[RMDB]
RNA sequence: GGGAACGACUCGAGUAGAGUCGAAAAGAAACGACGGUUGGCUAAUCCUGGUCGGACAUCAGGAGGUUAGUGCAGUCGCAUAAGCCAUCUUGACAACAAAAAGGAAAAAGAAAGAAGAAAAAGAAAAACUAUCACUCGGAUUCGUCCGAGUGAUAGUAAAAGAAACAACAACAACAAC
Reactivity to DMS in 0.01 (KOAc 150mM, MgCl2 10mM, bicine 150mM(pH8.5), 24C), signal-to-noise 2, nucleotides 027 to 126: g000a050a120a110c150g000a120c190g000g000u030u020g030g000c010u000a050a120u000c030c000u000g000g000u000c120g050g010a300c300a050u000c000a010g000g000a050g000g040u000u000a130g000u000g020c010a110g010u030c170g010c010a050u000a120a090g010c020c020a030u000c010u000u000g000a020c010a080a100c090a000a100a040a060a020g000g020a000a040a060a130a110g000a020a060a070g010a030a050g000a000a020a040a100a080g000a040a050a020a120
Reactivity to 2A3 in 0.01 (KOAc 150mM, MgCl2 10mM, bicine 150mM(pH8.5), 24C), signal-to-noise 3, nucleotides 027 to 126: g020a000a070a000c070g150a020c020g000g070u140u140g030g000c000u010a020a020u000c010c000u000g040g030u050c070g100g130a040c060a050u020c000a000g030g000a020g020g060u190u040a010g000u050g080c020a010g150u090c050g020c010a050u070a100a000g010c000c000a070u020c030u040u120g020a030c060a100a000c020a080a100a040a010a060g050g050a000a070a050a050a000g120a040a120a000g090a050a010g070a040a030a020a030a030g100a040a060a010a020

The data come from the RNA Mapping Database (RMDB), library OK1LIB. Chemical mapping of a 177-nucleotide RNA with DMS and 2A3. For 2A3 the reverse transcriptase was SuperScript II with manganese. Conditions: 150 mM KOAc, 10 mM MgCl2 and 150 mM bicine (pH 8.5), 24 C.